RNA sequence: GGGAACGACUCGAGUAGAGUCGAAAAUUCCCCUAUUUCGAUAGGGGAACACCAGCGGGCGGCUCGCAGUUCCGACUUCCUCCUCCUCUGAGUCAAAGGGCGAUAGGCCUCGGUUCGCCGAGGCCAAUAAACCAUCUAGGUUCGCCUAGAUGGUUUAAAAAGAAACAACAACAACAAC
Reactivity to DMS in 0.01 (KOAc 150mM, MgCl2 10mM, bicine 150mM(pH8.5), 24C), signal-to-noise 3, nucleotides 027 to 126: u010u000c000c000c000c010u000a010u000u000u010c130g010a020u000a000g010g010g000g000a010a010c090a120c030c030a090g000c070g010g000g010c050g000g000c030u000c050g010c070a090g010u000u000c040c030g010a080c070u000u000c020c010u000c030c020u000c020c010u000c030u000g000a070g020u010c070a060a070a080g000g000g000c090g000a160u010a110g010g010c000c010u000c000g000g010u000u020c180g020c010c010g020a010g000g010c000c000a010a030